[RMDB]
RNA sequence: GGGAACGACUCGAGUAGAGUCGAAAAGAGCUGCCUGCAGGUGGAGCCAGGGCUUGGCCGCGUCACUCUGGGCCGUGACCGACACUUUGGCUUCCACGUGGUGCUGGCCGAGGAUGCGGGGCAGGAGCACUGAUCAAGCAUUCGUGCUUGAUCAGUGAAAAGAAACAACAACAACAAC
Reactivity to DMS in 0.01 (KOAc 150mM, MgCl2 10mM, bicine 150mM(pH8.5), 24C), signal-to-noise 5, nucleotides 027 to 126: g010a110g010c020u010g000c010c020u000g010c030a080g020g020u000g010g000a050g010c020c020a040g000g000g000c300u000u000g000g020c030c010g010c130g010u000c020a060c040u010c130u000g000g010g010c140c050g000u000g000a040c020c050g020a080c140a100c060u000u010u000g000g010c000u000u010c010c010a020c070g010u000g010g020u000g010c050u000g020g010c020c030g000a100g020g000a110u000g000c060g000g000g000g000c040a050g000g010a140g010
Reactivity to 2A3 in 0.01 (KOAc 150mM, MgCl2 10mM, bicine 150mM(pH8.5), 24C), signal-to-noise 3, nucleotides 027 to 126: g050a010g050c020u030g020c000c030u040g020c020a040g010g130u030g010g020a010g020c000c000a010g030g030g000c060u090u100g010g010c060c010g050c090g000u020c000a070c040u120c100u140g030g090g000c020c020g020u030g010a040c020c040g040a020c020a010c030u060u050u030g000g000c000u240u040c010c000a020c010g040u060g020g020u060g040c080u120g040g010c010c010g000a040g090g000a060u070g010c030g030g010g010g000c030a020g010g050a030g010
This 177-nucleotide RNA was probed chemically with DMS and 2A3. The DMS profile rests on 8,855 reads. For 2A3 the reverse transcriptase was SuperScript II with manganese. The RNA was probed in 150 mM KOAc, 10 mM MgCl2 and 150 mM bicine (pH 8.5) at 24 C. DMS adducts were read by reverse transcription with MarathonRT.